[RMDB]
RNA sequence: GGGAACGACUCGAGUAGAGUCGAAAACGGAGGAGCGCCUAGGAACCCGAGCCGGAGCUCAGCGAGCGCAGCCUGCACGCCCGCCUCGCGUCCCGGGGGGGUCCCGCCUCCCACCCCGCCUCUGGACUCUGCAGUAAAUAUUCGUAUUUACUGCAGAAAAAGAAACAACAACAACAAC
Reactivity to 2A3 in 0.01 (KOAc 150mM, MgCl2 10mM, bicine 150mM(pH8.5), 24C), signal-to-noise 9, nucleotides 027 to 126: c030g030g020a050g020g020a090g080c080g040c060c070u100a070g020g040a080a070c020c000c010g020a080g110c000c010g030g000a070g020c050u040c080a020g010c020g020a010g010c080g000c040a010g020c010c040u160g030c070a020c070g020c000c010c020g010c010c000u010c010g010c010g020u040c020c000c000g010g000g010g000g000g000g020u010c000c010c000g020c000c000u000c000c000c000a070c000c000c000c010g040c010c030u030c030u030g030g000a030c020
Reactivity to DMS in 0.01 (KOAc 150mM, MgCl2 10mM, bicine 150mM(pH8.5), 24C), signal-to-noise 5, nucleotides 027 to 126: c190g000g000a100g000g000a100g000c070g000c090c080u040a120g010g000a060a080c020c030c020g010a160g000c020c020g010g030a300g010c040u000c170a100g030c020g030a050g000c070g020c070a140g010c060c030u020g000c070a240c070g000c050c030c020g010c040c010u050c080g020c060g000u010c040c020c030g000g000g010g010g000g030g000u000c010c010c060g000c020c030u010c000c010c020a110c050c020c010c020g010c110c050u010c000u000g000g010a300c190

Chemical mapping of a 177-nucleotide RNA with 2A3 and DMS. 2A3 is a SHAPE reagent: it acylates the 2'-hydroxyl of flexible nucleotides of all four kinds. It was measured as part of the RMDB libraries RFM100 and RFMREP. 2A3 adducts were read by reverse transcription with SuperScript II with manganese. The reactions ran in a buffer of 150 mM KOAc, 10 mM MgCl2 and 150 mM bicine (pH 8.5), at 24 C.